[RMDB]
RNA sequence: GGGAACGACUCGAGUAGAGUCGAAAAGACAAGCCUUUCUGCCCCAGAAGAGAAGACCAUUCUAGGGUGCUAAUGAGCAAAGAGGGUGAGGGUGGAAUAUCGGAGAGCAGCAGGGAGUGCAGGGGAAAAGACAAAUAGCAUUCGUGCUAUUUGUCUUAAAAGAAACAACAACAACAAC
Reactivity to DMS in 0.01 (KOAc 150mM, MgCl2 10mM, bicine 150mM(pH8.5), 24C), signal-to-noise 4, nucleotides 027 to 126: g000a130c110a090a140g010c040c030u010u010u000c030u010g010c040c010c010c010a050g020a070a050g000a170g020a090a080g010a130c090c100a110u000u010c050u000a060g000g020g010u000g000c050u010a080a080u000g010a120g000c050a020a070a080g000a080g000g010g030u010g010a090g020g000g010u000g020g010a070a070u000a070u000c090g000g010a060g020a080g020c060a050g010c060a050g000g010g000a080g020u000g020c070a060g000g000g010g010a040a040
Reactivity to 2A3 in 0.01 (KOAc 150mM, MgCl2 10mM, bicine 150mM(pH8.5), 24C), signal-to-noise 2, nucleotides 027 to 126: g070a010c030a050a020g010c000c000u060u160u060c070u100g010c000c000c000c000a030g040a080a030g140a020g070a190a030g080a070c040c030a020u050u000c030u080a070g000g000g040u010g000c000u060a130a080u250g090a050g070c050a100a060a020g030a090g040g030g010u090g080a120g010g010g020u060g020g070a070a050u100a070u150c060g010g020a060g000a000g050c010a000g000c040a020g000g050g010a080g040u110g030c040a050g000g000g000g030a010a080